[RMDB]
RNA sequence: GGGAACGACUCGAGUAGAGUCGAAAACAUUGUUUUGUGGAAGUUCGUUAAAGCAAGUUAUACACUGUGACUUAGUGGGUGGCCCCUAGUCCAUAAAUAUAAAACUGUGAGGGUCAUUAGCUUUUAUAAACUCAUGUAGAUAUUGUUAUUAUGUCUACCAUAGCACUACGUUCGCGUAGUGCUAUGGAAAAGAAACAACAACAACAAC
Reactivity to DMS in 0.01 (KOAc 150mM, MgCl2 10mM, bicine 150mM(pH8.5), 24C), signal-to-noise 1, nucleotides 027 to 156: c060a210u000u010g010u010u000u000u010g000u010g010g000a160a160g020u020u000c040g010u000u000a020a030a080g010c020a080a090g020u000u000a100u000a060c040a150c010u000g010u000g000a110c080u000u020a050g030u000g040g010g000u000g000g000c030c010c020c020u010a030g010u000c000c060a140u000a030a090a150u000a170u000a060a100a070a030c010u010g020u030g010a080g000g020g030u000c010a040u000u000a130g030c030u000u000u000u000a030u010a030a120a020c020u020c000a070u000g010u000a100g030a110u000a070u000u000g000u010u000a060u000u000a030u000g000u000c000u010a220
Reactivity to 2A3 in 0.01 (KOAc 150mM, MgCl2 10mM, bicine 150mM(pH8.5), 24C), signal-to-noise 3, nucleotides 027 to 156: c050a030u060u070g040u020u100u020u040g090u030g070g050a130a140g020u090u120c050g040u110u200a060a010a000g000c020a040a060g020u110u090a120u050a060c050a030c080u040g030u060g100a050c020u070u060a020g020u040g080g050g010u020g000g010c000c000c000c010u010a000g010u000c030c000a020u070a170a260a000u240a040u060a080a120a030a030c000u010g030u060g190a260g030g000g000u000c010a020u010u040a000g010c010u090u030u050u040a080u090a100a050a010c040u070c100a110u130g030u090a010g050a040u080a060u130u070g040u150u030a140u110u080a040u140g050u010c020u030a020